[RMDB]
RNA sequence: GGGAACGACUCGAGUAGAGUCGAAAAGGCGUCAGCUCGGUUUCCACCUCUCUACUCCCCAUGGCCAUGCUCGCCCAAAGCGCGAUGGCGCCGGAUUGCGCGGGAGCUGGCGUAGACAUGAUGCCAGAAUCAACGCCAAGUUCGCUUGGCGUUGAUUAAAAGAAACAACAACAACAAC
Reactivity to DMS in 0.01 (KOAc 150mM, MgCl2 10mM, bicine 150mM(pH8.5), 24C), signal-to-noise 1, nucleotides 027 to 126: g010g030c000g030u030c080a040g020c020u000c030g040g000u000u000u010c010c010a080c100c060u030c010u000c020u000a130c060u000c020c000c000c060a040u010g030g000c000c020a010u000g020c020u000c000g000c050c010c040a090a100a170g000c000g000c020g030a050u000g020g030c030g020c050c020g000g010a080u000u040g030c010g030c030g000g000g030a080g000c020u000g010g010c000g000u010a050g010a100c120a090u000g000a090u030g000c000c000a100g020
Reactivity to 2A3 in 0.01 (KOAc 150mM, MgCl2 10mM, bicine 150mM(pH8.5), 24C), signal-to-noise 3, nucleotides 027 to 126: g060g020c010g050u080c010a010g020c030u040c080g030g000u000u040u050c020c000a020c030c000u020c000u000c000u000a060c030u070c020c030c000c000a120u110g010g000c000c000a020u060g010c010u000c020g020c020c000c000a050a090a040g020c010g000c020g050a020u070g060g040c030g000c010c010g060g020a040u020u040g030c020g020c000g030g020g010a060g000c080u030g000g000c000g010u030a030g040a030c010a050u120g070a070u160g090c000c010a030g020
Conditions: 150 mM KOAc, 10 mM MgCl2 and 150 mM bicine (pH 8.5), 24 C. Chemical mapping of a 177-nucleotide RNA with DMS and 2A3. 2A3 adducts were read by reverse transcription with SuperScript II with manganese. Reactivities are given for positions 27 through 126.